[RMDB]
RNA sequence: GGGAACGACUCGAGUAGAGUCGAAAAGAUAUGGAUGUCGUAGAACUACGCUGGUACUCGGAAACGAGUACGGCGCUACGAGCAUCCUAAGUCAAAACAGGACGGAUACUUCGGUAUCCGUCCUGAAGCUUUCACUCAUCUUCGGAUGAGUGAAAGCAAAAGAAACAACAACAACAAC
Reactivity to DMS in 0.01 (KOAc 150mM, MgCl2 10mM, bicine 150mM(pH8.5), 24C), signal-to-noise 1, nucleotides 027 to 126: g020a030u000a300u000g000g010a010u000g050u000c000g010u050a020g010a090a090c160u020a300c040g030c000u000g000g070u010a000c010u000c000g020g050a090a090a190c000g000a000g010u000a000c000g000g000c010g000c000u000a000c000g040a130g010c000a020u000c000c000u000a000a200g000u020c020a010a140a090a180c000a000g020g000a070c000g000g000a040u000a000c000u000u040c270g030g000u000a000u020c000c000g030u000c000c000u000g000a000a060
Overview:
Chemical mapping of a 177-nucleotide RNA with DMS. DMS adducts were read by reverse transcription with MarathonRT. The reactions ran in a buffer of 150 mM KOAc, 10 mM MgCl2 and 150 mM bicine (pH 8.5), at 24 C. The DMS profile rests on 898 reads.